[RMDB]
RNA sequence: GGGAACGACUCGAGUAGAGUCGAAAAAGCCGGGCAUUCGCCCGGUCGAACCGUCGAAGUUCGUGGAAGCCGUAAUGGCAGGAAGCGAACGAACGUCGGAACAGGGAAACUCAAGUCAAUCUGGGGCAAAGUAUAGUCCUUUCGAGGACUAUACUUUAAAAGAAACAACAACAACAAC
Reactivity to 2A3 in 0.01 (KOAc 150mM, MgCl2 10mM, bicine 150mM(pH8.5), 24C), signal-to-noise 5, nucleotides 027 to 126: a000g010c000c000g000g000g020c050a120u300u300c250g010c000c000c000g000g010u010c000g010a040a010c000c000g000u010c000g020a060a010g000u000u000c000g000u030g010g030a050a000g000c000c000g030u290a130a250u300g010g010c010a010g110g120a040a000g010c000g010a000a010c000g010a130a000c000g010u030c000g010g010a030a040c020a060g020g000g070a040a020a020c000u010c040a050a060g060u040c030a040a200u040c040u050g020g000g000g080c060
Reactivity to DMS in 0.01 (KOAc 150mM, MgCl2 10mM, bicine 150mM(pH8.5), 24C), signal-to-noise 5, nucleotides 027 to 126: a230g000c010c010g010g020g040c020a220u070u040c270g010c010c000c000g010g000u000c040g000a060a140c000c010g030u000c010g010a100a300g000u000u000c000g020u000g000g000a300a150g000c000c010g000u020a150a080u040g010g020c010a030g000g010a300a180g000c000g020a000a010c000g010a070a110c020g020u000c010g000g000a080a120c090a130g000g010g000a160a080a010c030u000c030a050a040g010u010c040a060a210u000c010u010g000g000g000g000c300